[RMDB]
RNA sequence: GGGAACGACUCGAGUAGAGUCGAAAAUUCAAGAGCAUCCCAGCAUUGCUACCUCAGGAUCCCAUGUCCUGAAUGCAACAGAGUGAUUUCGCUGCUGAAUUACUAUUCAUGGCAUGGCUCUUCACAGCUCGUGCCCUUAAUUCGUUAAGGGCACGAGAAAAGAAACAACAACAACAAC
Reactivity to DMS in 0.01 (KOAc 150mM, MgCl2 10mM, bicine 150mM(pH8.5), 24C), signal-to-noise 1, nucleotides 027 to 126: u020u010c170a050a040g020a060g010c040a100u000c050c000c020a150g060c120a110u000u020g010c040u000a100c180c010u000c030a030g000g000a010u000c230c050c110a050u000g040u000c000c000u000g040a000a000u020g040c080a040a090c150a080g020a020g020u020g020a180u020u020u020c070g050c020u000g020c070u000g000a040a050u010u020a040c040u010a020u000u000c020a090u000g010g000c060a020u000g010g010c270u000c020u000u010c070a080c160a110g010
Reactivity to 2A3 in 0.01 (KOAc 150mM, MgCl2 10mM, bicine 150mM(pH8.5), 24C), signal-to-noise 1, nucleotides 027 to 126: u020u010c030a000a000g010a030g080c000a040u010c030c010c010a000g010c020a020u030u060g010c020u100a110c010c000u030c040a010g000g030a060u040c010c040c010a040u150g030u040c010c000u030g000a000a000u040g020c000a050a020c000a010g100a000g040u050g110a260u020u300u240c050g070c050u300g030c000u030g080a000a060u110u010a120c060u060a020u040u120c040a030u090g040g000c010a020u040g020g000c020u010c000u090u060c080a080c050a090g040

An RNA of 177 nucleotides, treated with DMS and 2A3 and read out base by base. Source: RMDB library OK2TST, as collected in RNAgym. Conditions: 150 mM KOAc, 10 mM MgCl2 and 150 mM bicine (pH 8.5), 24 C.